Chemical mapping of a 177-nucleotide RNA with 2A3 and DMS. DMS adducts were read by reverse transcription with MarathonRT. It was measured as part of the RMDB library OK2TRN.
[RMDB]
RNA sequence: GGGAACGACUCGAGUAGAGUCGAAAACAGGGGCCAAGUCGGCGACCGGCGCUUCACGCGCGUGGUCGGCAUCGGCAAGGAUGCCGCCGGCACGCUGUACGUGCUCAACAAUCCGUGGGGCGGCGGAACCUAGGUAGGCGUUCGCGCCUACCUAGGUAAAAGAAACAACAACAACAAC
Reactivity to 2A3 in 0.01 (KOAc 150mM, MgCl2 10mM, bicine 150mM(pH8.5), 24C), signal-to-noise 1, nucleotides 027 to 126: c060a020g070g020g090g000c000c020a040a070g200u050c040g030g040c020g010a040c000c000g140g000c020g000c010u120u070c050a020c030g100c030g000c060g040u050g040g070u220c050g000g030c000a080u050c040g290g100c080a000a100g240g000a020u020g000c000c000g000c000c010g040g040c000a000c020g070c110u100g090u200a030c020g060u060g030c020u040c070a020a130c000a010a120u080c040c000g030u000g020g000g010g060c070g080g000c020g020g000a000
Reactivity to DMS in 0.01 (KOAc 150mM, MgCl2 10mM, bicine 150mM(pH8.5), 24C), signal-to-noise 2, nucleotides 027 to 126: c100a120g000g000g010g040c040c030a120a130g020u000c110g010g010c020g030a110c000c000g000g000c030g000c020u000u000c110a040c080g030c150g010c130g020u010g030g030u000c000g010g010c040a020u010c010g000g000c230a060a170g000g010a030u010g010c000c000g000c010c030g000g010c000a010c000g010c110u000g000u010a220c120g030u000g040c070u000c160a080a060c160a110a120u040c080c040g010u000g010g010g010g000c030g000g000c000g000g000a110